[RMDB]
RNA sequence: GGGAACGACUCGAGUAGAGUCGAAAAAGAAUUGUACCACCACUGCGUAUCCUAAACGGGCUCUGCAGUGGUUAUUCUUGUAAAGUACUAGGAGUGAAUAGUGGCCCGUAUUGUAGGCAUUAACAUUAAAAGGCAAUCCACUUCGGUGGAUUGCCAACAUCAGAUAUUGCUUCGGCAAUAUCUGAUGAAAAGAAACAACAACAACAAC
Reactivity to DMS in 0.01 (KOAc 150mM, MgCl2 10mM, bicine 150mM(pH8.5), 24C), signal-to-noise 2, nucleotides 027 to 156: a050g000a020a040u010u000g000u010a090c040c080a100c000c010a010c000u000g010c010g000u000a060u000c020c010u010a040a110a110c160g030g010g020c050u000c060u000g080c010a030g010u000g000g010u010u000a010u010u000c000u000u000g020u020a060a080a120g000u000a060c070u000a070g010g010a090g010u030g000a060a140u000a060g000u010g010g000c020c020c030g010u000a050u000u010g020u000a000g030g010c050a050u000u000a050a120c090a110u000u000a030a080a110a160g000g010c000a010a030u000c010c010a040c000u000u000c300g060g010u000g030g020a010u000u010g030c030c010a000a020
Reactivity to 2A3 in 0.01 (KOAc 150mM, MgCl2 10mM, bicine 150mM(pH8.5), 24C), signal-to-noise 3, nucleotides 027 to 156: a000g050a030a040u160u080g050u200a090c000c040a000c000c000a010c020u010g030c000g030u080a100u120c010c040u180a220a190a150c110g000g000g000c020u110c120u150g000c020a000g010u000g000g000u000u000a000u000u000c020u040u070g050u060a030a090a230g040u020a040c050u050a050g040g040a070g030u100g060a080a070u040a150g090u050g020g030c010c000c040g060u030a100u010u130g090u100a010g020g040c020a060u160u110a080a000c030a050u070u190a050a140a060a080g000g000c000a000a000u020c000c000a000c000u020u060c220g020g000u030g010g000a000u000u000g000c020c000a000a000

Record summary: This 207-nucleotide RNA was probed chemically with DMS and 2A3. Values cover nucleotides 27 to 156. For 2A3, 1,036 sequencing reads were counted. For 2A3 the reverse transcriptase was SuperScript II with manganese. Source: RMDB library M2RFPK, as collected in RNAgym.